[RMDB]
RNA sequence: GGGAACGACUCGAGUAGAGUCGAAAAGGUCGUCUUUUCGAAGACGACCACUGUCGUUCCCAAAACUUUACGAAACAUGUCGAAAGACAUGCUGAAACAGAAUUGGUGUGUGUUUCGACACACACAACAAUGGCUUGGUGUUCGCACCAAGCCAUUGAAAAGAAACAACAACAACAAC
Reactivity to 2A3 in 0.01 (KOAc 150mM, MgCl2 10mM, bicine 150mM(pH8.5), 24C), signal-to-noise 1, nucleotides 027 to 126: g030g000u000c010g030u010c000u020u040u030u090c260g090a000a000g020a010c000g000a000c000c000a000c000u000g050u000c000g000u010u000c020c010c000a000a000a000a000c050u070u100u150a100c070g010a040a090a000c000a000u010g010u000c000g040a030a000a020g000a000c020a000u000g000c010u070g000a160a110a040c060a030g120a200a160u180u190g140g000u000g020u010g000u000g000u020u040u070c190g030a000c020a000c000a000c000a000c010a010a030
Reactivity to DMS in 0.01 (KOAc 150mM, MgCl2 10mM, bicine 150mM(pH8.5), 24C), signal-to-noise 2, nucleotides 027 to 126: g040g020u000c000g010u010c000u000u000u000u000c280g000a000a040g030a000c000g010a000c000c000a020c120u000g000u000c000g020u010u000c010c000c000a050a080a100a140c140u000u000u000a050c100g000a260a120a180c000a000u000g000u000c000g010a130a090a160g000a010c000a000u010g000c070u000g000a160a120a040c170a050g010a080a150u000u010g000g010u000g010u000g010u000g000u020u000u020c100g000a110c070a040c000a000c030a000c000a020a140
This 177-nucleotide RNA was probed chemically with 2A3 and DMS. Reactivities are rounded to 0.1 and cut off at 0 and 3. Values cover nucleotides 27 to 126. The 2A3 profile rests on 1,262 reads. For DMS the reverse transcriptase was MarathonRT.